[RMDB]
RNA sequence: GGGAACGACUCGAGUAGAGUCGAAAACUAUUUAUAGACAGAGUGGAAAUUACUGAAUAUCAAAAUCAACCUCGAGCACGUAUUCUUCCGGUGGUACGAUUCCAAUUGGGCGAGGCAUAAGCAGAAAGGAUAGUUUAGGAUUCGUCUUGAGCUAUCCAAAAGAAACAACAACAACAAC
Reactivity to 2A3 in 0.01 (KOAc 150mM, MgCl2 10mM, bicine 150mM(pH8.5), 24C), signal-to-noise 9, nucleotides 027 to 126: c010u010a060u130u130u050a180u090a030g060a020c040a010g060a030g040u090g030g110a080a090a070u140u050a130c020u040g040a040a040u140a040u130c090a060a070a050a170u100c040a050a050c020c020u020c030g020a010g040c030a010c040g000u010a020u040u010c000u000u000c010c000g000g010u010g000g000u010a010c020g010a030u080u040c020c020a040a100u090u080g040g000g010c010g010a020g020g000c010a040u050a140a020g060c040a010g130a110a110a000
Reactivity to DMS in 0.01 (KOAc 150mM, MgCl2 10mM, bicine 150mM(pH8.5), 24C), signal-to-noise 8, nucleotides 027 to 126: c030u010a040u020u020u030a070u010a060g010a160c060a040g000a080g010u000g010g020a070a060a050u040u020a060c050u000g010a060a090u020a070u020c120a050a070a060a060u030c110a060a110c080c010u000c030g010a070g020c070a050c050g000u010a060u000u010c010u000u010c030c030g000g010u010g000g000u000a020c070g000a090u020u020c060c050a050a100u030u020g000g000g010c030g000a050g010g020c070a050u010a040a090g010c090a070g010a070a100a100
Chemical mapping of a 177-nucleotide RNA with 2A3 and DMS. Reactivities are given for positions 27 through 126. The 2A3 profile rests on 22,687 reads. DMS adducts were read by reverse transcription with MarathonRT. The DMS profile rests on 28,011 reads.